[RMDB]
RNA sequence: GGGAACGACUCGAGUAGAGUCGAAAAAGCCCUUUUAAUAAAGCAGUUACUGUACCUAAGAACAGUAAGACAGAUCGUUGUAUUGCUAUCGAACCUGGUUGGAAUAUGUUUUUCCAACUGGGUAUCGGUGGCAUUCUACGCGAUCGGUUGCGUUGCUCAUAUAAUCUUGGUUCGCCAAGAUUAUAUGAAAAGAAACAACAACAACAAC
Reactivity to 2A3 in 0.01 (KOAc 150mM, MgCl2 10mM, bicine 150mM(pH8.5), 24C), signal-to-noise 4, nucleotides 027 to 156: a000g030c000c000c000u050u200u060u080a190a100u150a110a070a010g030c050a050g020u060u030a010c000u030g030u180a160c020c080u200a180a080g050a140a020c000a000g010u000a000a030g070a030c070a030g010a000u000c000g050u070u300g010u090a010u140u020g010c000u000a010u010c000g000a000a010c000c000u000g040g000u000u000g020g030a040a030u080a090u260g300u130u180u020u050u020c000c000a000a000c000u000g000g010g000u010a070u010c000g010g000u000g000g010c000a000u040u000c000u000a000c000g000c000g000a010u010c020g010g000u050u030g040c040g020u020u030g030c000u000
Reactivity to DMS in 0.01 (KOAc 150mM, MgCl2 10mM, bicine 150mM(pH8.5), 24C), signal-to-noise 1, nucleotides 027 to 156: a140g010c020c010c000u040u000u000u000a070a110u010a100a110a140g010c080a130g020u000u000a020c010u000g000u000a150c080c070u010a160a140g000a080a040c010a030g010u010a020a120g020a120c060a050g010a010u000c000g000u000u000g020u000a040u010u000g000c000u000a020u000c000g010a070a060c010c010u010g000g000u010u000g000g000a040a020u000a090u010g000u010u000u000u000u000c000c010a010a020c000u010g010g000g010u000a000u000c030g030g020u000g010g010c030a000u010u010c050u010a040c030g000c010g040a000u000c010g000g000u000u000g010c050g030u010u000g000c060u000
Structure probing data (2A3 and DMS) for a 207-nucleotide construct. Conditions: 150 mM KOAc, 10 mM MgCl2 and 150 mM bicine (pH 8.5), 24 C. 2A3 adducts were read by reverse transcription with SuperScript II with manganese. DMS adducts were read by reverse transcription with MarathonRT. Values are in units of 0.01, from 0 to 300, in steps of 10. The 2A3 profile rests on 2,482 reads.